[RMDB]
RNA sequence: GGGAACGACUCGAGUAGAGUCGAAAAGUCCGGGACGAAAGUCAGGACAAGGCAAUGUGGACGCCGACGAGUCAAAAGCCACCGGAAAUAUCCGCCUUCGAGGCAGGCACAUCCGCAAGAAAAGACAGGAUACACUUAGCUUCGGCUAAGUGUAUCCAAAAGAAACAACAACAACAAC
Reactivity to 2A3 in 0.01 (KOAc 150mM, MgCl2 10mM, bicine 150mM(pH8.5), 24C), signal-to-noise 2, nucleotides 027 to 126: g060u040c020c000g170g280g000a010c010g030a120a020a030g000u000c000a000g000g000a010c020a000a040g020g000c000a010a140u110g020u120g100g020a030c040g000c020c030g010a030c030g040a000g050u080c050a010a000a080a000g030c040c000a030c010c000g050g030a050a090a000u080a060u010c010c000g000c010c000u010u030c150g020a090g010g040c040a070g070g000c030a030c000a040u050c000c000g020c100a030a000g050a160a150a010a000g060a040c080a080
Reactivity to DMS in 0.01 (KOAc 150mM, MgCl2 10mM, bicine 150mM(pH8.5), 24C), signal-to-noise 1, nucleotides 027 to 126: g030u030c000c010g000g080g020a080c000g080a030a050a110g040u000c000a270g000g000a000c080a160a080g020g030c050a090a110u080g010u080g000g000a140c070g020c100c000g000a110c130g020a030g030u020c030a070a030a180a060g000c000c030a010c020c040g000g010a020a110a200u010a060u000c000c050g000c070c080u000u000c020g000a100g090g080c020a110g050g000c130a060c220a050u000c020c000g010c050a050a070g000a090a160a040a020g000a100c190a110
The record gives the reactivity of an RNA of 177 nucleotides to 2A3 and DMS. The reactions ran in a buffer of 150 mM KOAc, 10 mM MgCl2 and 150 mM bicine (pH 8.5), at 24 C. The data come from the RNA Mapping Database (RMDB), library OK1LIB. For 2A3 the reverse transcriptase was SuperScript II with manganese. For DMS, 1,116 sequencing reads were counted. Reactivities are given for positions 27 through 126.